[RMDB]
The record gives the reactivity of an RNA of 207 nucleotides to DMS and 2A3. 2A3 adducts were read by reverse transcription with SuperScript II with manganese. Source: RMDB library OK3TST, as collected in RNAgym. For DMS, 2,279 sequencing reads were counted. 2A3 is a SHAPE reagent: it acylates the 2'-hydroxyl of flexible nucleotides of all four kinds.

RNA sequence: GGGAACGACUCGAGUAGAGUCGAAAAUCAGCAUCGCGCCCAAUCUUGACUGCAAUUUCAUAACUAUUAUUAUUGAUUGUCAGCGUAACAGUCUCAGACGUCCGGUUAGCACGCCAGCGAUGCCGUGCAGGAUGUUCACGAAUACCUAGUGUACCAGGAGCGCUAUUUAAUUCGUUAAAUAGCGCUCAAAAGAAACAACAACAACAAC
Reactivity to DMS in 0.01 (KOAc 150mM, MgCl2 10mM, bicine 150mM(pH8.5), 24C), signal-to-noise 1, nucleotides 027 to 156: u010c030a070g000c000a010u000c010g030c040g000c060c020c020a110a110u010c070u000u000g020a120c030u010g030c020a040a080u000u000u000c100a080u000a040a050c050u000a160u020u010a260u000u010a100u000u000g020a080u000u000g000u000c010a050g040c090g020u000a110a090c070a090g010u000c000u040c100a150g020a060c010g020u000c000c050g020g010u010u020a080g000c000a010c000g050c000c020a180g020c060g020a110u000g020c000c000g080u000g000c030a090g040g010a060u020g040u000u000c030a180c040g000a140a080u000a080c020c020u010a100g010u010g010u000a060c090c030a170g000
Reactivity to 2A3 in 0.01 (KOAc 150mM, MgCl2 10mM, bicine 150mM(pH8.5), 24C), signal-to-noise 3, nucleotides 027 to 156: u130c030a000g000c010a000u000c000g000c000g040c020c020c020a010a070u090c110u140u170g110a190c040u000g030c060a080a130u070u110u200c070a090u150a230a060c090u200a110u300u100a080u110u020a030u040u210g030a050u030u030g090u160c060a030g000c040g020u030a070a070c020a080g070u000c030u000c080a050g000a030c000g010u010c010c030g070g030u060u070a020g010c000a010c010g000c020c040a020g000c000g020a020u020g000c000c000g000u000g000c020a000g010g010a010u000g020u050u060c060a040c110g090a070a060u070a080c010c020u090a060g070u030g060u080a080c040c060a060g130